This 177-nucleotide RNA was probed chemically with DMS and 2A3. The reactions ran in a buffer of 150 mM KOAc, 10 mM MgCl2 and 150 mM bicine (pH 8.5), at 24 C. The data come from the RNA Mapping Database (RMDB), library M2PK50. For 2A3 the reverse transcriptase was SuperScript II with manganese. Values cover nucleotides 27 to 126.
[RMDB]
RNA sequence: GGGAACGACUCGAGUAGAGUCGAAAAUGUCCCAGUUUCGACUGGGACAAAAGCAUGAGGAGGAUCAAAGAUCAAAGCCGUCGCUCAUGCGUAUAGACGGCAAAAGGCUAGUGUUCGCACUAGCCAAGUGAGAAAAGAAGUUCGCUUCUUUUCUCACAAAAGAAACAACAACAACAAC
Reactivity to DMS in 0.01 (KOAc 150mM, MgCl2 10mM, bicine 150mM(pH8.5), 24C), signal-to-noise 2, nucleotides 027 to 126: u010g010u000c000c000c000a010g020u000u000u000c150g030a030c010u010g000g000g000a010c000a000a030a050a120g000c010a010u000g000a020g000g030a180g020g010a090u010c120a080a070a090g010a130u000c100a070a120a100g010c000c000g010u000c020g000c030u000c020a010u000g000c020g020u010a040u000a140g000a020c000g000g000c020a080a060a110a110g000g010c000u000a000g020u000g010u000u020c190g010c000a010c000u000a000g000c010c010a010a020
Reactivity to 2A3 in 0.01 (KOAc 150mM, MgCl2 10mM, bicine 150mM(pH8.5), 24C), signal-to-noise 4, nucleotides 027 to 126: u050g000u000c000c000c000a000g000u030u050u070c190g080a010c010u010g000g000g000a010c000a010a040a000a000g010c010a010u010g000a000g070g050a050g080g060a070u140c120a150a150a080g070a040u080c050a030a110a020g040c000c000g020u020c010g030c030u020c010a010u020g000c000g000u000a010u010a030g020a010c000g020g000c030a020a040a000a050g000g000c000u010a000g010u010g040u040u090c240g010c080a000c000u000a000g000c010c000a000a000